Annotation: This 177-nucleotide RNA was probed chemically with DMS. It was measured as part of the RMDB library TTRINS.
RNA sequence: GGGAACGACUCGAGUAGAGUCGAAAAGAUAUGGAGGAGGCAAAUAUCCCAAUUGGCUUUUGACGAAUGAUGGUCGGAAACGACCAUCCAUUCGAUAAGCCAAGGGAUAUUUGCCUCCUCCUAAGUCCGAGUAAAUAAUCUUCGGAUUAUUUACUCGAAAAGAAACAACAACAACAAC
Reactivity to DMS in 0.01 (KOAc 150mM, MgCl2 10mM, bicine 150mM(pH8.5), 24C), signal-to-noise 4, nucleotides 027 to 126: g000a080u010a300u000g000g010a010g000g010a010g010g000c000a000a020a010u000a010u010c000c000c010a150a230u000u000g010g010c000u000u010u010u010g020a270c190g010a010a010u000g010a020u000g010g020u000c000g020g010a090a110a250c010g020a030c000c000a000u000c140c060a010u000u000c010g020a120u000a010a010g000c000c000a010a050g010g000g000a000u000a010u000u000u000g000c000c000u010c000c000u000c000c000u000a000a080g010u010c060

DMS adducts were read by reverse transcription with MarathonRT.